[RMDB]
RNA sequence: GGGAACGACUCGAGUAGAGUCGAAAACGCAUGUGGCGGCACCAAGCAUGAGGCAACAACUGCAGUACUUGUGGGGAAGGCACAAGUAGGACACCAACAUUACCUGCAAGCAAGACGCAAAAUUAAUCUCCGCAUAUCCCUUCGGGGAUAUGCGGAGAAAAGAAACAACAACAACAAC
Reactivity to 2A3 in 0.01 (KOAc 150mM, MgCl2 10mM, bicine 150mM(pH8.5), 24C), signal-to-noise 1, nucleotides 027 to 126: c050g000c080a100u030g000u000g070g000c000g050g000c040a000c000c000a000a000g030c030a060u070g000a030g000g030c000a060a000c030a020a020c060u100g000c030a050g030u020a040c010u020u000g000u000g050g070g000g040a010a010g160g000c010a000c050a030a000g030u050a090g080g120a000c000a020c100c070a120a010c010a000u000u250a170c000c010u000g000c020a000a110g000c030a080a000g050a010c000g030c010a000a000a180a000u060u060a040a060u030